Source information
Source: RMDB library M2RFPK, as collected in RNAgym. The record gives the reactivity of an RNA of 207 nucleotides to DMS and 2A3. For 2A3, 1,372 sequencing reads were counted. The reactions ran in a buffer of 150 mM KOAc, 10 mM MgCl2 and 150 mM bicine (pH 8.5), at 24 C. For 2A3 the reverse transcriptase was SuperScript II with manganese. The DMS profile rests on 2,323 reads.
[RMDB]
RNA sequence: GGGAACGACUCGAGUAGAGUCGAAAAGGGACUGGCCCGAUGAAGCCCGGCAACCUAACUUUAUUUAAGCGUAAAGUGAAGGUGCUAAUUCAAGCAAAAUGGUGUAUUCCGUUUUGGUAGAUAAGAGAAGCGUGACAUGAGUUCGCUCAUGUCACAAGAACCCUACUACGUUCGCGUAGUAGGGUUCAAAAGAAACAACAACAACAAC
Reactivity to DMS in 0.01 (KOAc 150mM, MgCl2 10mM, bicine 150mM(pH8.5), 24C), signal-to-noise 1, nucleotides 027 to 156: g000g020g050a120c080u010g000g010c010c030c030g020a200u010g000a100a080g010c030c010c050g050g010c000a080a030c000c030u010a100a020c000u000u000u000a030u010u010u010a090a160g060c260g000u000a030a010a010g010u010g000a050a060g000g030u000g000c010u000a070a080u000u000c040a130a210g000c000a010a030a060a030u010g010g030u010g000u000a130u000u000c000c000g000u040u000u000u000g000g010u000a080g030a190u000a080a160g050a180g010a060a150g050c130g030u000g010a050c000a010u000g000a010g020u000u010c300g050c000u010c010a000u000g010u000c000a010c000a030a050
Reactivity to 2A3 in 0.01 (KOAc 150mM, MgCl2 10mM, bicine 150mM(pH8.5), 24C), signal-to-noise 2, nucleotides 027 to 156: g050g000g010a030c090u070g060g080c000c000c010g040a070u100g040a040a030g030c000c000c000g000g010c030a100a110c000c000u020a030a010c020u040u000u020a050u070u160u090a120a040g090c010g050u010a000a000a000g000u030g060a190a060g000g000u000g010c000u000a030a020u090u080c070a030a060g010c020a060a010a000a000u010g010g030u090g050u100a110u170u050c000c010g000u010u010u030u000g060g010u110a120g060a130u120a160a090g100a010g050a090a020g140c060g010u000g000a000c000a000u010g000a000g020u060u120c190g020c100u020c000a000u010g000u000c000a000c000a000a000